Structure probing data (DMS and 2A3) for a 177-nucleotide construct. For DMS the reverse transcriptase was MarathonRT. The DMS profile rests on 915 reads. Values cover nucleotides 27 to 126.

RNA sequence: GGGAACGACUCGAGUAGAGUCGAAAACGGCACUGCUUCGGCAGUGCCGAAAUCUUGGCGAAAUGUAUAGCAUAAAGCAGGCGGAAGUGCAGUUAGAAUAAGAAAGUAACACCUUCGGGUGUUACAAGGUCAUGUAUACGUUCGCGUAUACAUGACCAAAAGAAACAACAACAACAAC
Reactivity to DMS in 0.01 (KOAc 150mM, MgCl2 10mM, bicine 150mM(pH8.5), 24C), signal-to-noise 1, nucleotides 027 to 126: c050g010g030c000a000c000u000g030c020u000u000c130g020g020c000a010g020u000g010c050c000g010a020a050a050u010c030u000u000g010g000c030g000a110a010a020u030g000u000a060u000a110g040c040a030u000a080a060a180g000c030a030g000g000c060g010g000a060a090g020u000g010c040a060g000u010u030a080g010a100a030u010a040a070g000a080a080a170g000u020a000a020c000a000c010c000u010u010c180g060g010g040u010g020u020u000a000c010a040a020
Reactivity to 2A3 in 0.01 (KOAc 150mM, MgCl2 10mM, bicine 150mM(pH8.5), 24C), signal-to-noise 1, nucleotides 027 to 126: c000g020g000c010a000c000u060g130c030u070u090c070g130g050c040a040g010u000g050c010c000g000a010a000a000u000c000u000u050g060g000c030g030a020a110a130u110g060u110a070u090a130g070c050a050u160a140a110a010g030c050a000g060g000c050g050g000a070a030g020u040g050c010a010g000u070u140a040g050a100a110u150a200a020g060a090a090a030g020u000a000a000c000a010c020c000u030u060c150g140g000g050u000g000u000u000a000c000a000a000